[RMDB]
Structure probing data (DMS and 2A3) for a 170-nucleotide construct. The RNA was probed in 150 mM KOAc, 10 mM MgCl2 and 150 mM bicine (pH 8.5) at 24 C.
RNA sequence: GGGAACGACUCGAGUAGAGUCGAAAAUUCGUCGUCAUCCUUGGCUAGCCUCUGGAGUUCCUCUUCUUCCUCUUGGCUGAGGCGCUUUCCUCCUCCGGCCAGCUGCUUCUUCUUGUUCUCCAGGGCCACUAAAGCUUCUUCGGAAGCUUUAAAAGAAACAACAACAACAAC
Reactivity to DMS in 0.01 (KOAc 150mM, MgCl2 10mM, bicine 150mM(pH8.5), 24C), signal-to-noise 5, nucleotides 027 to 129: u050u010c070g040u000c000g000u020c060a060u060c020c020u050u000g010g030c060u010a080g000c060c000u040c050u000g020g030a040g000u010u000c020c020u020c060u030u010c050u010u000c050c020u010c000u000u000g000g000c080u000g020a060g040g000c250g030c110u020u020u020c060c040u010c020c030u000c050c000g050g000c010c010a080g000c090u040g020c050u000u000c020u000u000c040u050u040g020u050u000c020u000c010c050a050g040g000g030c000c070a070c130u030
Reactivity to 2A3 in 0.01 (KOAc 150mM, MgCl2 10mM, bicine 150mM(pH8.5), 24C), signal-to-noise 6, nucleotides 027 to 129: u060u030c030g030u000c010g020u030c040a070u050c030c010u040u050g040g000c030u040a020g020c020c000u110c030u050g020g020a030g020u030u020c020c010u030c000u050u010c010u060u040c020c020u040c030u100u070g040g000c050u040g030a040g020g020c020g000c030u030u060u050c010c020u010c000c000u010c010c010g020g000c000c000a020g000c030u050g010c000u030u040c000u040u010c020u040u110g030u070u010c020u000c010c010a020g020g020g000c030c010a040c030u020

Source: RMDB library 15KLIB, as collected in RNAgym. The 2A3 profile rests on 21,335 reads.